This 177-nucleotide RNA was probed chemically with 2A3 and DMS.
RNA sequence: GGGAACGACUCGAGUAGAGUCGAAAAGAUUACGUGUCGUUGUGGAAUCGAUACUACGCACGAGAUUCCAAGGUCUCUGUAGUACGUCCGCUGGUGACGUCUUUGGAGUCACGGUCGAUAUACGAAAGGUUACUACUACCUUCGGGUAGUAGUAACCAAAAGAAACAACAACAACAAC
Reactivity to 2A3 in 0.01 (KOAc 150mM, MgCl2 10mM, bicine 150mM(pH8.5), 24C), signal-to-noise 3, nucleotides 027 to 126: g060a010u210u240a090c030g000u020g070u060c000g020u040u060g000u000g060g120a030a080u110c050g040a020u000a130c010u000a020c020g010c020a050c070g010a000g000a010u070u080c120c000a050a060g050g000u030c000u000c000u090g080u030a050g010u040a000c010g020u000c060c030g000c150u170g120g040u230g010a010c000g070u000c010u080u000u030g010g020a020g000u000c000a000c020g030g000u010c040g000a060u010a000u030a210c060g060a090a030a000
Reactivity to DMS in 0.01 (KOAc 150mM, MgCl2 10mM, bicine 150mM(pH8.5), 24C), signal-to-noise 2, nucleotides 027 to 126: g020a140u000u000a100c090g020u000g000u000c030g020u020u020g010u010g010g020a100a100u040c060g000a100u020a030c050u020a020c010g020c180a100c060g000a110g000a000u000u000c010c090a060a080g020g030u000c000u010c050u010g020u000a020g040u030a050c040g010u020c020c030g050c070u020g010g000u010g000a010c040g000u010c020u010u000u000g010g010a030g010u000c000a010c020g030g000u000c020g010a060u010a010u040a080c040g010a070a070a130